Conditions: 150 mM KOAc, 10 mM MgCl2 and 150 mM bicine (pH 8.5), 24 C. Structure probing data (2A3 and DMS) for a 177-nucleotide construct. It was measured as part of the RMDB library M2PK50.
RNA sequence: GGGAACGACUCGAGUAGAGUCGAAAAUGGACUGCGUUCGCGCAGUCCAAAAGAAUAGACGAACACUAGCGUAGAAGUGUUCUGGUCACAUAACUACGCAAAAAAGCUGAGUGUUCGCACUCAGCAAGACGUACAUUGUGUUCGCACAAUGUACGUCAAAAGAAACAACAACAACAAC
Reactivity to 2A3 in 0.01 (KOAc 150mM, MgCl2 10mM, bicine 150mM(pH8.5), 24C), signal-to-noise 1, nucleotides 027 to 126: u040g000g040a000c010u000g010c000g020u030u050c080g020c020g000c090a000g000u000c000c010a010a020a000a010g020a030a050u110a100g090a040c030g010a020a000c020a010c020u030a070g000c000g000u010a000g030a150a010g020u010g000u030u000c030u020g060g060u100c040a030c000a180u150a130a050c010u010a000c010g000c040a000a000a160a000a000a000g030c000u000g000a000g010u000g050u060u080c150g000c010a000c000u020c000a020g030c000a000a030
Reactivity to DMS in 0.01 (KOAc 150mM, MgCl2 10mM, bicine 150mM(pH8.5), 24C), signal-to-noise 1, nucleotides 027 to 126: u000g020g060a000c000u000g000c000g010u010u010c230g010c000g020c010a020g000u000c000c000a010a010a040a070g000a160a060u040a120g010a160c120g000a000a000c000a030c000u000a110g010c000g000u000a020g000a170a060g000u000g000u000u000c000u000g020g000u000c030a050c110a110u020a060a190c000u000a020c000g000c020a010a050a070a070a020a090g000c000u020g030a040g000u000g010u010u000c300g020c000a010c000u010c000a010g000c030a050a040

2A3 adducts were read by reverse transcription with SuperScript II with manganese.